[RMDB]
RNA sequence: GGGAACGACUCGAGUAGAGUCGAAAAGGGAUAUUGUUCGCAAUAUCCCAAAAGGUACCAGGCACGGUGCCUGAGAACUGAAUAGCUAAUACGGAAGCUAAAAAACCACGGAGUUCGCUCCGUGGAACUACAUCUAUAGCUUCGGCUAUAGAUGUAGAAAAGAAACAACAACAACAAC
Reactivity to DMS in 0.01 (KOAc 150mM, MgCl2 10mM, bicine 150mM(pH8.5), 24C), signal-to-noise 5, nucleotides 027 to 126: g000g010g010a010u000a000u000u000g010u000u010c170g040c000a000a010u000a010u010c000c010c000a020a000a080a050g000g010u000a030c020c000a140g030g030c230a140c240g000g010u000g000c000c000u000g000a090g010a080a110c110u000g010a090a150u000a020g000c010u000a080a090u020a150c260g010g010a120a050g010c010u010a000a060a070a100a080a150c010c000a000c000g010g010a010g020u000u020c200g010c010u000c000c010g030u000g000g000a000a050
Reactivity to 2A3 in 0.01 (KOAc 150mM, MgCl2 10mM, bicine 150mM(pH8.5), 24C), signal-to-noise 4, nucleotides 027 to 126: g000g000g000a000u000a000u020u020g010u020u050c110g000c070a000a000u000a000u000c000c000c000a020a000a000a000g000g000u010a010c020c010a040g170g070c090a030c180g110g030u070g000c000c000u010g040a110g000a060a040c100u120g030a090a040u030a050g010c020u060a030a070u160a210c140g110g050a050a020g010c020u090a140a110a010a010a000a040c010c000a000c000g000g010a000g010u060u080c140g080c130u000c000c000g000u000g000g000a000a000
Structure probing data (DMS and 2A3) for a 177-nucleotide construct. The reactions ran in a buffer of 150 mM KOAc, 10 mM MgCl2 and 150 mM bicine (pH 8.5), at 24 C. For DMS, 5,453 sequencing reads were counted.